Structure probing data (DMS and 2A3) for a 177-nucleotide construct.
It was measured as part of the RMDB library OK1LIB.
For 2A3 the reverse transcriptase was SuperScript II with manganese.

RNA sequence: GGGAACGACUCGAGUAGAGUCGAAAAUGAGUAUUCUAUGUUUGAAUUACCACCUGUAGGAGACCUAACCAUCGACUUGUCGAAGAGUAAACCAUAUAUAUCUGGAGAUUUUGUCACAUCCGGUGUGACGUGCGUGUACGUUCGCGUACACGCACGUAAAAGAAACAACAACAACAAC
Reactivity to DMS in 0.01 (KOAc 150mM, MgCl2 10mM, bicine 150mM(pH8.5), 24C), signal-to-noise 1, nucleotides 027 to 126: u020g060a080g080u020a020u000u020c080u000a090u000g030u000u000u000g000a140a070u000u000a110c180c020a020c090c020u040g020u000a020g000g000a060g020a020c070c070u000a030a010c060c130a140u000c000g000a010c030u000u000g000u070c020g000a110a060g000a170g090u000a020a110a300c020c040a130u060a130u020a080u020a020u000c000u000g040g060a100g050a080u030u090u000u000g010u030c010a110c100a060u000c060c020g000g000u000g020u020g000
Reactivity to 2A3 in 0.01 (KOAc 150mM, MgCl2 10mM, bicine 150mM(pH8.5), 24C), signal-to-noise 2, nucleotides 027 to 126: u190g010a000g080u050a000u090u000c020u070a070u160g230u080u280u080g140a130a050u110u040a160c000c030a090c010c000u200g080u090a000g080g000a050g090a090c000c000u010a040a240c000c000a000u020c000g020a020c000u020u060g020u110c040g000a010a000g000a030g010u020a000a000a180c020c050a000u030a000u000a020u030a060u150c050u000g020g020a030g000a060u040u110u220u130g210u060c030a000c000a050u000c000c080g060g000u000g000u010g000